This 177-nucleotide RNA was probed chemically with 2A3 and DMS. The 2A3 profile rests on 12,289 reads. Values cover nucleotides 27 to 126. The DMS profile rests on 5,968 reads. In probing experiments dimethyl sulfate is read out at A N1 and C N3, which are open when not base-paired. DMS adducts were read by reverse transcription with MarathonRT. It was measured as part of the RMDB library TTRDEL.
[RMDB]
RNA sequence: GGGAACGACUCGAGUAGAGUCGAAAAGAUAUGGACCAUGACCCAACCGUUGUAUCCGUUGAAAUCGGAAACGAUGGAGGAUACGACGGUUGCAUGGUCCUAAGUCAAACACAGGUUCGCCUGUGAACAGUUAGACAGAGUUCGCUCUGUCUAACUGAAAAGAAACAACAACAACAAC
Reactivity to 2A3 in 0.01 (KOAc 150mM, MgCl2 10mM, bicine 150mM(pH8.5), 24C), signal-to-noise 3, nucleotides 027 to 126: g040a030u080a050u160g010g010a000c000c000a000u030g060a130c000c080c050a000a000c010c000g000u010u000g000u000a000u010c010c020g080u170u060g020a020a030a000u010c020g030g020a080a020a020c010g000a000u020g040g030a020g010g000a010u010a000c010g000a000c000g000g010u000u000g000c000a000u000g010g000u000c010c000u000a000a010g000u000c010a010a090a050c010a000c000a000g030g090u080u110c290g140c070c000u000g010u010g010a040a020
Reactivity to DMS in 0.01 (KOAc 150mM, MgCl2 10mM, bicine 150mM(pH8.5), 24C), signal-to-noise 5, nucleotides 027 to 126: g030a060u000a300u000g010g000a010c000c010a010u000g010a250c200c300c070a000a000c000c000g010u010u000g010u000a000u000c000c010g000u010u010g000a100a120a030u010c000g010g000a150a090a160c000g010a020u000g000g000a100g020g010a020u000a000c010g000a010c000g000g000u000u000g000c000a010u000g000g000u000c000c000u000a010a050g000u000c040a130a100a210c010a020c000a020g000g000u000u000c200g010c000c030u000g010u000g010a060a140